[RMDB]
Record summary
The record gives the reactivity of an RNA of 177 nucleotides to 2A3 and DMS. The 2A3 profile rests on 1,365 reads.
RNA sequence: GGGAACGACUCGAGUAGAGUCGAAAAGCCACGGGCGCAUUCCGGGUCCCGGGGCCGGGGCGCGGACGGCUGCCGACGGGAGCCCGGCACCCGCGCCCCGACACGUCACGGCCGAGCUGCCACGCGAGCCCAUACCUAUAUUCGUAUAGGUAUGGGCAAAAGAAACAACAACAACAAC
Reactivity to 2A3 in 0.01 (KOAc 150mM, MgCl2 10mM, bicine 150mM(pH8.5), 24C), signal-to-noise 1, nucleotides 027 to 126: g040c000c010a010c040g000g050g010c050g000c080a080u200u040c090c000g000g080g000u080c000c060c000g010g020g020g000c020c000g040g000g000g050c030g000c050g040g080a010c050g040g010c120u060g070c050c020g050a080c080g050g070g050a060g030c070c040c020g010g030c030a060c000c000c000g100c010g070c020c020c000c010g000a000c000a010c000g050u040c020a020c050g000g020c030c000g000a030g040c050u090g060c040c000a080c040g030c000g070a030
Reactivity to DMS in 0.01 (KOAc 150mM, MgCl2 10mM, bicine 150mM(pH8.5), 24C), signal-to-noise 2, nucleotides 027 to 126: g000c030c020a100c090g010g020g020c120g010c050a120u000u000c100c060g010g000g000u000c060c080c000g000g020g010g000c030c020g010g020g000g000c030g000c010g020g000a070c070g010g000c170u000g000c020c010g020a040c090g030g010g010a190g020c030c060c010g010g010c040a060c080c010c010g050c060g050c000c000c010c020g000a000c050a070c080g000u010c050a110c080g000g000c030c020g000a130g000c060u000g000c010c020a060c050g010c050g010a240